[RMDB]
Structure probing data (2A3 and DMS) for a 207-nucleotide construct. 2A3 adducts were read by reverse transcription with SuperScript II with manganese. It was measured as part of the RMDB library OK3TST. For 2A3, 3,035 sequencing reads were counted. The RNA was probed in 150 mM KOAc, 10 mM MgCl2 and 150 mM bicine (pH 8.5) at 24 C. Reactivities are given for positions 27 through 156.
RNA sequence: GGGAACGACUCGAGUAGAGUCGAAAAUCGUCUGUUCGAACACAUUGAUCGCUACAACGCGGUCUCCGUAUCAUAUUACUACGAGCUUGUUGGUAUCACCGGCACGUUCACUGACCACCAGUGGGGUUGGACAAACCUCAACGCAUCUGGCGUGAGCUCUAUUUCACAUCUUCGGAUGUGAAAUAGAAAAAGAAACAACAACAACAAC
Reactivity to 2A3 in 0.01 (KOAc 150mM, MgCl2 10mM, bicine 150mM(pH8.5), 24C), signal-to-noise 2, nucleotides 027 to 156: u080c030g070u010c050u070g080u060u130c060g080a140a020c050a020c040a210u090u220g000a010u000c000g000c020u130a150c140a270a030c150g010c010g000g010u000c000u030c020c010g000u040a090u080c050a060u040a100u230u130a080c070u050a060c060g020a000g030c040u040u050g040u020u030g050g000u080a070u170c080a030c100c030g040g000c050a010c070g000u030u050c010a010c030u050g090a180c000c030a020c020c010a050g020u060g030g000g020g010u010u000g040g020a040c150a020a050a010c000c000u020c020a070a070c050g020c020a120u110c100u130g030g010c020g020u030g010a030g000c000
Reactivity to DMS in 0.01 (KOAc 150mM, MgCl2 10mM, bicine 150mM(pH8.5), 24C), signal-to-noise 2, nucleotides 027 to 156: u000c070g010u010c030u000g000u000u010c050g010a150a040c060a070c060a080u010u010g000a020u010c020g040c010u000a160c200a100a100c170g000c040g000g010u000c010u010c090c040g040u000a100u010c050a120u000a110u000u000a080c060u000a060c030g010a080g020c030u000u010g010u010u000g000g030u010a110u000c090a070c020c010g030g040c040a090c040g000u000u000c020a070c070u000g020a210c020c030a070c010c010a080g010u000g010g000g010g050u000u020g030g030a160c110a060a030a060c010c010u000c000a060a040c040g040c060a060u010c050u020g010g040c030g000u000g010a070g020c090